[RMDB]
RNA sequence: GGGAACGACUCGAGUAGAGUCGAAAAACCCGGUCCUUUCGGUUCCGGAUUCCUCAGCCCCCAGCCCCCCGGGGUCGACGGGAUCGGGUCUGUACGCGCGACAAGGAGGGCCAACGCGAGUUGGUCCGUAUUUAGGCAAGUUCGCUUGCCUAAAUACAAAAGAAACAACAACAACAAC
Reactivity to DMS in 0.01 (KOAc 150mM, MgCl2 10mM, bicine 150mM(pH8.5), 24C), signal-to-noise 4, nucleotides 027 to 126: a070c020c000c000g010g010u000c000c010u000u000u000c010g010g000u010u000c010c010g010g000a250u000u000c030c030u000c120a120g010c080c020c010c030c030a090g030c020c010c040c130c000c020g010g000g010g010u000c010g000a000c070g000g000g000a010u000c010g000g000g010u010c020u010g010u000a060c080g000c060g010c070g000a060c120a110a090g020g020a180g030g010g010c010c000a010a010c010g010c290g010a160g010u000u000g010g000u000c000c010

The record gives the reactivity of an RNA of 177 nucleotides to DMS. For DMS, 4,665 sequencing reads were counted. Source: RMDB library RFMREP, as collected in RNAgym. Conditions: 150 mM KOAc, 10 mM MgCl2 and 150 mM bicine (pH 8.5), 24 C. Reactivities are given for positions 27 through 126.